[RMDB]
The data come from the RNA Mapping Database (RMDB), library 15KLIB. Chemical mapping of a 170-nucleotide RNA with 2A3 and DMS. The 2A3 profile rests on 36,354 reads. For DMS the reverse transcriptase was MarathonRT. Conditions: 150 mM KOAc, 10 mM MgCl2 and 150 mM bicine (pH 8.5), 24 C.
RNA sequence: GGGAACGACUCGAGUAGAGUCGAAAAAAUGAUGCCUAUUCACGAUUUUUGGGGUUGUUUAACAAGUAUAAGUACUUCUCUGGUGCUAUGGAAACAGCCGCUUAUCGUGAAGCUGCAGCAUGUCAUCCACCAAACGACUUCGGUCGUUUGAAAAGAAACAACAACAACAAC
Reactivity to 2A3 in 0.01 (KOAc 150mM, MgCl2 10mM, bicine 150mM(pH8.5), 24C), signal-to-noise 9, nucleotides 027 to 129: a000a000u060g010a000u010g000c010c020u060a090u010u000c000a000c000g000a010u010u050u070u130u170g080g000g000g000u010u000g030u020u030u000a170a070c040a040a030g050u050a080u050a180a020g030u030a080c040u180u160c150u050c110u210g040g010u020g010c010u030a080u170g020g020a010a000a000c000a000g000c000c040g140c110u010u010a000u010c000g000u000g000a000a000g000c040u040g000c000a010g010c000a020u030g040u080c040a050u020c010c010a050c040
Reactivity to DMS in 0.01 (KOAc 150mM, MgCl2 10mM, bicine 150mM(pH8.5), 24C), signal-to-noise 7, nucleotides 027 to 129: a080a010u000g000a040u020g000c000c090u040a170u000u000c030a030c030g000a030u000u040u000u030u020g020g000g020g040u000u000g020u020u010u040a070a070c080a080a110g030u000a050u040a100a070g030u000a080c060u020u040c170u000c170u060g030g040u020g000c000u020a050u030g010g010a070a030a010c000a030g050c000c040g010c020u010u020a000u010c000g000u030g000a010a000g000c230u000g000c030a060g020c010a040u000g010u000c120a090u000c000c000a110c200